[RMDB]
RNA sequence: GGGAACGACUCGAGUAGAGUCGAAAAGCGUACUACCUGCUCAGCGUGUGCCUACCGGAACCCAUAGCAAUCCCAAAUAGGAUUGCACAUGGGAAUUCCGUAACCCGUUGAACCCAGGUAUCGCAAACAGAUGUGUUAGUUCGCUAACACAUCUGAAGCAUGUUAGCUAGUUCGCUAGCUAACAUGCAAAAGAAACAACAACAACAAC
Reactivity to DMS in 0.01 (KOAc 150mM, MgCl2 10mM, bicine 150mM(pH8.5), 24C), signal-to-noise 2, nucleotides 027 to 156: g000c050g030u000a130c050u000a000c010c010u000g020c000u000c000a060g000c000g060u000g000u030g030c090c020u020a300c210c020g020g010a040a110c000c000c010a030u000a180g000c010a010a000u000c000c020c030a070a200a220u000a120g010g000a030u000u000g020c010a050c040a000u030g000g060g020a050a070u000u000c010c000g040u010a020a050c000c020c010g070u010u000g000a030a080c030c020c070a120g000g020u000a020u000c040g080c010a120a130a210c020a010g000a040u000g010u000g000u000u000a000g000u010u000c300g010c010u000a000a000c000a020c000a000u010c010u010g000a050a150
Reactivity to 2A3 in 0.01 (KOAc 150mM, MgCl2 10mM, bicine 150mM(pH8.5), 24C), signal-to-noise 5, nucleotides 027 to 156: g020c010g050u100a070c040u010a000c030c000u010g000c010u000c010a000g010c020g030u210g050u140g110c040c080u110a120c140c010g000g020a010a030c000c000c000a010u030a040g000c010a000a000u020c010c010c030a200a290a120u300a120g000g000a000u000u000g000c110a090c050a140u000g000g020g000a020a210u040u000c000c000g000u010a010a020c000c000c010g010u010u010g010a030a020c020c050c020a010g010g010u030a040u300c010g000c000a020a030a050c000a000g000a000u000g000u000g010u000u010a020g000u020u040c240g010c200u000a000a000c000a000c000a000u000c000u010g000a020a010
Structure probing data (DMS and 2A3) for a 207-nucleotide construct. High 2A3 reactivity points to a flexible backbone, as in loops and unpaired stretches. The 2A3 profile rests on 5,639 reads. The reactions ran in a buffer of 150 mM KOAc, 10 mM MgCl2 and 150 mM bicine (pH 8.5), at 24 C. For DMS, 2,545 sequencing reads were counted. It was measured as part of the RMDB library RNAMAK.